Overview:
Chemical mapping of a 207-nucleotide RNA with DMS and 2A3. DMS adducts were read by reverse transcription with MarathonRT. As a SHAPE reagent, 2A3 marks flexible, mostly unpaired nucleotides at the ribose 2'-OH. Source: RMDB library M2RFPK, as collected in RNAgym.
RNA sequence: GGGAACGACUCGAGUAGAGUCGAAAAAGAGGAGGCUGGGUUUUGCGAUCUUUAAGCAGAUGGCAGGUUCACCCCGUACGGUGCCGAAGUUCGCGCUUCCGUGAAACGCGAAAAUCGGACGGUGGCUAAGACCAAUAACAGUUCGCUGUUAUUGGAAGUUAUCUACUUUCUUCGGAAAGUAGAUAACAAAAGAAACAACAACAACAAC
Reactivity to DMS in 0.01 (KOAc 150mM, MgCl2 10mM, bicine 150mM(pH8.5), 24C), signal-to-noise 1, nucleotides 027 to 156: a130g000a080g010g020a070g030g030c030u010g000g020g010u000u000u000u020g020c020g000a030u000c020u000u000u010a110a170g050c130a060g010a080u000g000g020c010a060g020g020u010u000c020a080c030c000c000c020g020u010a030c060g020g020u000g010c030c050g020a070a110g030u000u000c000g020c030g000c010u000u000c030c230g020u010g020a000a000a000c010g000c020g010a000a020a090a090u000c000g020g000a080c050g010g020u000g000g020c020u020a060a180g000a210c020c010a020a020u000a010a010c000a020g030u000u010c300g040c010u000g010u000u000a010u000u000g010g010a030a040
Reactivity to 2A3 in 0.01 (KOAc 150mM, MgCl2 10mM, bicine 150mM(pH8.5), 24C), signal-to-noise 4, nucleotides 027 to 156: a010g060a030g040g010a030g030g030c080u030g040g030g000u020u050u150u050g020c030g030a020u050c020u030u140u150a110a030g050c020a010g020a070u040g070g000c020a010g050g000u070u090c040a040c010c010c000c010g000u050a040c050g040g100u120g070c010c000g000a020a020g090u010u000c000g000c000g000c060u080u030c040c050g090u130g070a090a040a000c010g000c000g000a010a010a000a060u030c000g000g000a010c010g000g050u100g020g000c030u060a070a020g030a070c000c000a000a000u000a010a000c000a000g020u050u070c160g050c100u010g000u000u000a000u000u010g000g000a000a010
Conditions: 150 mM KOAc, 10 mM MgCl2 and 150 mM bicine (pH 8.5), 24 C. The DMS profile rests on 3,660 reads.